[RMDB]
This 207-nucleotide RNA was probed chemically with 2A3. Reactivities are given for positions 27 through 156.
RNA sequence: GGGAACGACUCGAGUAGAGUCGAAAACACAGCCCUGGCCGCCCACACAAACAGCGAGCUCACCAAGCUGUUCACCUGCCCCAUAGUCUGCGAGGUCUUCUUAAACACGUUCGAGGAGUACAAGACCCUCGUAAAUCUGCCCAACCUCACCCCGUUCGAUUACCUCGGGAUUCGUCCCGAGGUAAUCAAAAGAAACAACAACAACAAC
Reactivity to 2A3 in 0.01 (KOAc 150mM, MgCl2 10mM, bicine 150mM(pH8.5), 24C), signal-to-noise 1, nucleotides 027 to 156: c050a000c010a010g010c010c010c030u020g010g000c060c000g020c020c020c000a010c020a020c020a100a170a000c030a020g040c000g020a010g090c060u070c030a050c030c010a020a020g010c010u010g000u050u020c090a110c030c050u070g020c000c010c000c010a030u050a050g060u020c020u050g050c020g070a010g040g000u000c000u040u040c000u040u100a120a090a010c090a010c110g070u080u090c060g000a090g060g030a110g000u000a030c060a020a020g010a060c010c020c030u030c000g000u010a040a080a140u050c020u060g030c010c030c000a040a060c020c060u070c020a070c040c000c000c020g040u010u140c000
Annotation:
It was measured as part of the RMDB library OK3TST. The reactions ran in a buffer of 150 mM KOAc, 10 mM MgCl2 and 150 mM bicine (pH 8.5), at 24 C.